[RMDB]
RNA sequence: GGGAACGACUCGAGUAGAGUCGAAAACAUGCGCGUCAGAAGAAUCGUGUGCAUACAGAGUCACGGGCCCUUCUGCUCCGUUGUGUGCAUGUAGAAUUUUAAAUCUUACGACUGAGCGUCGGCGCGGUCUAGGCAGCCGGUUCGCUGGUUGUCUAGAAAAAGAAACAACAACAACAAC
Reactivity to DMS in 0.01 (KOAc 150mM, MgCl2 10mM, bicine 150mM(pH8.5), 24C), signal-to-noise 9, nucleotides 027 to 126: c050a080u030g010c010g020c020g010u010c040a050g010a050a050g000a060a100u020c020g010u000g010u030g010c010a050u020a070c170a080g010a130g020u030c150a060c060g000g000g010c100c180c120u030u020c100u010g010c020u020c030c050g010u010u010g020u000g010u000g000c030a020u000g000u020a060g010a050a060u010u020u030u030a040a110a120u020c030u010u010a100c070g010a050c030u010g000a090g010c090g010u010c050g000g000c020g020c030g010g000
Reactivity to 2A3 in 0.01 (KOAc 150mM, MgCl2 10mM, bicine 150mM(pH8.5), 24C), signal-to-noise 9, nucleotides 027 to 126: c040a040u170g030c010g000c010g070u070c040a040g020a080a010g030a030a090u050c010g020u020g020u060g100c010a010u060a100c030a020g160a030g150u130c040a020c030g010g020g010c030c030c000u130u110c080u110g010c030u000c030c020g030u050u050g010u010g000u010g020c020a020u040g040u090a050g050a060a050u040u070u080u160a110a180a090u040c040u050u110a020c030g020a020c020u050g070a020g090c040g030u040c030g030g000c000g000c000g010g020